RNA sequence: GGGAACGACUCGAGUAGAGUCGAAAAGAAUAUAAGAGCGCAGUAAAUGUGAGAGCAAACUGCGCCCGGACUGUAGGAUCCGGUGGCACAGCAACGCUCAAUCACAACACGCUGUGCCACUUGAAGACAUAUUAUGAGCGUUCGCGCUCAUAAUAUGAAAAGAAACAACAACAACAAC
Reactivity to 2A3 in 0.01 (KOAc 150mM, MgCl2 10mM, bicine 150mM(pH8.5), 24C), signal-to-noise 9, nucleotides 027 to 126: g030a050a030u210a010u050a120a030g030a020g010c000g000c010a000g010u040a020a120a080u050g030u030g050a100g010a000g070c000a080a280a030c000u000g000c000g000c000c000c000g000g010a010c040u120g090u220a050g070g080a090u000c000c000g010g000u010g010g000c000a000c000a000g000c010a050a100c090g030c040u070c070a070a130u210c050a050c040a140a160c060a020c140g000c000u000g000u000g000c000c000a000c000u030u070g040a040a010g070a010
Reactivity to DMS in 0.01 (KOAc 150mM, MgCl2 10mM, bicine 150mM(pH8.5), 24C), signal-to-noise 6, nucleotides 027 to 126: g010a130a090u050a050u020a080a090g000a080g020c010g010c000a000g000u000a090a060a060u010g000u000g000a160g010a190g010c010a030a090a040c010u000g000c000g000c000c000c010g000g000a080c080u010g030u000a090g010g010a150u010c010c020g000g020u000g000g010c000a000c000a010g010c010a130a130c210g000c070u020c130a090a120u040c250a090c240a090a100c180a130c190g000c000u000g020u000g000c000c000a000c000u000u010g020a070a120g000a190

Structure probing data (2A3 and DMS) for a 177-nucleotide construct. DMS adducts were read by reverse transcription with MarathonRT. The data come from the RNA Mapping Database (RMDB), library OK1LIB. 2A3 adducts were read by reverse transcription with SuperScript II with manganese.